[RMDB]
RNA sequence: GGGAACGACUCGAGUAGAGUCGAAAAGAAAGAAAGAAAGAAACCGUCUCUGCUAGUCUCACGGUAACCACGUUGAAAUCGCAACGAAAGAGGCUCGCACUCAACUUCAACGGCUUAACGAGUGCAAAAAACUUACUGAUCUUCGGAUCAGUAAGAAGUAACCUGUAAACUUCGGUUUACAGGUUACAAAAGAAACAACAACAACAAC
Reactivity to 2A3 in 0.01 (KOAc 150mM, MgCl2 10mM, bicine 150mM(pH8.5), 24C), signal-to-noise 2, nucleotides 027 to 156: g030a010a090a000g100a130a060a010g090a060a100a020g060a060a050a020c050c030g060u030c060u000c020u070g000c010u010a010g040u030c020u000c040a040c020g020g020u030a040a030c040c010a020c040g000u000u030g070a120a180a120u120c120g000c080a020a020c010g050a080a000a100g030a010g000g020c010u030c050g000c010a000c000u060c010a020a110c040u170u070c040a050a050c060g090g000c060u040u100a050a030c040g010a010g020u020g020c020a200a000a000a000a000a000c000u000u010a010c000u000g000a000u000c000u010u030c120g100g000a000u000c000a000g000u000a000a000g000a000a000